[RMDB]
RNA sequence: GGGAACGACUCGAGUAGAGUCGAAAAGCUGGGAUUACAGGCGCGCGCCACCAUCCUCUGCUAAUUAUUUUUGUAUGUUAGUAGAGACAGGUUUCACCAUGUUGGCCAGGCUGGUCUGCAACUCUUGAACUCCGGGGAUCCGCCCACCUCGGCCUUCCGUGAGUGAUAAUUUCGAUUAUCACUCACGAAAAGAAACAACAACAACAAC
Reactivity to 2A3 in 0.01 (KOAc 150mM, MgCl2 10mM, bicine 150mM(pH8.5), 24C), signal-to-noise 1, nucleotides 027 to 156: g040c070u020g040g000g130a200u080u140a090c050a080g020g040c030g000c010g030c040g020c120c000a010c020c000a060u050c000c010u000c000u000g000c020u000a010a070u030u250a100u050u140u090u160u250g160u100a130u090g000u010u020a010g000u000a010g000a000g060a070c100a140g050g010u040u100u100c080a090c010c040a030u060g000u030u050g070g010c020c040a020g060g000c050u010g010g020u010c020u030g000c030a070a080c010u010c010u100u090g070a090a040c030u060c090c020g080g000g050g000a100u080c110c070g040c010c020c000a010c010c000u020c040g050g050c010c020u080u020c020